[RMDB]
RNA sequence: GGGAACGACUCGAGUAGAGUCGAAAAUCGCCCCAGCCCAAGUGUUCGGUGUCGCGGGCGUCGUCGACACCCAUGCCGACCCCAGAGUUGGCGGGGCUUUGGUAUUCGGCGAUGACGAGCAGCGUGGUCUGGUGAUCAAGUUCGCUUGAUCACCAGAAAAAGAAACAACAACAACAAC
Reactivity to 2A3 in 0.01 (KOAc 150mM, MgCl2 10mM, bicine 150mM(pH8.5), 24C), signal-to-noise 1, nucleotides 027 to 126: u030c020g010c010c000c000c010a000g000c020c000c020a220a100g100u060g030u250u170c010g030g040u060g000u030c020g000c080g100g040g050c030g100u110c010g060u030c000g000a030c000a030c010c000c000a020u160g000c010c010g030a050c040c000c000c100a020g090a090g140u060u090g040g040c030g000g000g000g000c030u080u020u010g030g000u050a160u050u190c090g030g000c000g020a020u050g020a020c030g000a020g010c020a010g000c020g150u140g070g000
Reactivity to DMS in 0.01 (KOAc 150mM, MgCl2 10mM, bicine 150mM(pH8.5), 24C), signal-to-noise 2, nucleotides 027 to 126: u010c070g030c000c010c030c050a110g020c050c000c010a130a090g010u010g000u010u010c120g010g010u000g020u000c010g010c050g010g000g000c170g010u000c010g010u000c000g020a050c030a030c010c030c040a060u020g000c000c010g020a020c040c050c100c190a120g000a150g030u000u000g000g020c020g010g000g010g000c020u010u010u020g010g010u000a100u010u020c110g010g010c010g020a050u010g000a090c040g010a080g020c040a110g000c080g020u000g010g020